[RMDB]
RNA sequence: GGGAACGACUCGAGUAGAGUCGAAAAUAAAAAGUGGUAACACCGACUUGGUCGGAGCCUCUGUUCCGGUAUUUGAUGAGAUUGUUCUUUCUCUAAGAAAUAUGAACAAAGUCAGAGAUUUUGAUCCCGGCAUCAUACCGUUCGCGGUAUGAUGCCGAAAAGAAACAACAACAACAAC
Reactivity to DMS in 0.01 (KOAc 150mM, MgCl2 10mM, bicine 150mM(pH8.5), 24C), signal-to-noise 1, nucleotides 027 to 126: u000a120a080a030a040a020g000u000g000g070u000a070a120c300a230c000c000g000a030c030u060u000g010g020u000c030g000g060a080g010c000c010u000c000u000g000u040u050c000c170g000g050u050a120u020u030u040g040a040u040g000a140g000a100u000u000g000u000u000c020u000u000u000c000u010c300u040a130a100g000a030a120a080u020a100u000g000a030a030c000a010a000a060g070u000c000a010g000a240g000a090u000u000u000u060g000a030u150c060c080
Reactivity to 2A3 in 0.01 (KOAc 150mM, MgCl2 10mM, bicine 150mM(pH8.5), 24C), signal-to-noise 1, nucleotides 027 to 126: u300a020a010a000a000a000g120u060g150g000u020a060a030c030a030c140c000g020a020c000u150u300g180g040u050c080g000g000a000g000c000c000u000c000u050g030u100u100c040c000g000g030u080a090u000u070u010g020a000u020g000a000g020a070u040u060g090u100u000c100u000u070u060c080u050c000u040a070a030g020a010a060a000u180a040u120g010a010a050c040a010a010a010g120u050c080a080g010a050g040a170u000u000u000u190g110a020u060c000c000